[RMDB]
RNA sequence: GGGAACGACUCGAGUAGAGUCGAAAAUACGAGGUACCACUACUAGGCUAGACAUGAGAGCGUGACAUGGAUCCGAUCCUGCACUCGAUCUCUAGGAUCCUCGAUCUCGGUACGACAUGCUAGGCGAACUGCUCGUGUAUUUCGAUACACGAGCAGUAAAAGAAACAACAACAACAAC
Reactivity to DMS in 0.01 (KOAc 150mM, MgCl2 10mM, bicine 150mM(pH8.5), 24C), signal-to-noise 3, nucleotides 027 to 126: u000a080c150g000a040g000g040u000a160c070c030a140c130u000a080c160u000a110g000g010c010u000a030g000a110c050a050u000g000a160g000a150g040c040g000u000g000a080c100a080u000g000g010a040u000c050c070g010a120u000c020c060u030g040c110a070c090u000c090g010a030u010c040u000c130u010a130g000g030a010u000c000c030u020c070g010a070u010c050u000c030g020g050u000a080c050g010a110c050a010u000g000c030u000a040g000g000c030g020a090
Reactivity to 2A3 in 0.01 (KOAc 150mM, MgCl2 10mM, bicine 150mM(pH8.5), 24C), signal-to-noise 2, nucleotides 027 to 126: u200a010c050g010a000g090g040u060a070c010c060a030c040u090a020c000u040a040g130g000c010u000a000g050a110c030a030u090g030a050g010a010g140c020g000u030g020a030c010a110u120g000g010a010u020c060c070g030a040u010c020c070u070g060c060a030c050u060c030g080a120u000c050u000c040u090a010g050g020a030u020c010c000u050c140g140a270u000c030u020c020g010g030u230a070c040g040a050c070a010u050g050c020u060a030g100g060c020g040a040